[RMDB]
RNA sequence: GGGAACGACUCGAGUAGAGUCGAAAAUUUAGUACCCACAGCGAUGUGGAGGUGGCGCAUCUGCCCAAAAUCAAUAAGAUCAUGGUGAUUAGCAAAGAGGUUUUUGGCGUCUUUGACAAGCCCUAAACCGUAUUACCCAGUUCGCUGGGUAAUACGGAAAAGAAACAACAACAACAAC
Reactivity to DMS in 0.01 (KOAc 150mM, MgCl2 10mM, bicine 150mM(pH8.5), 24C), signal-to-noise 2, nucleotides 027 to 126: u000u000u010a110g000u010a150c040c020c010a050c070a040g020c230g000a100u000g020u000g000g000a140g000g000u000g020g030c050g020c140a030u000c070u010g000c020c000c050a110a050a060a050u010c120a060a110u020a110a140g000a050u010c080a090u010g000g020u000g000a040u000u010a140g010c060a020a060a080g000a080g010g000u000u000u010u000u000g020g030c070g020u000c020u010u000u020g000a020c080a060a130g000c020c010c030u000a040a100a100
Reactivity to 2A3 in 0.01 (KOAc 150mM, MgCl2 10mM, bicine 150mM(pH8.5), 24C), signal-to-noise 1, nucleotides 027 to 126: u090u020u030a050g020u070a080c000c000c000a000c000a000g040c000g080a090u020g000u060g030g010a080g040g020u020g020g000c040g020c030a060u030c020u060g050c070c040c060a040a050a000a070u050c060a000a110u170a300a030g120a120u050c010a070u110g100g000u070g070a130u080u160a030g000c020a010a040a060g070a120g110g050u060u010u020u030u070g080g040c000g080u000c000u040u060u020g050a060c000a010a040g000c050c000c000u040a090a050a040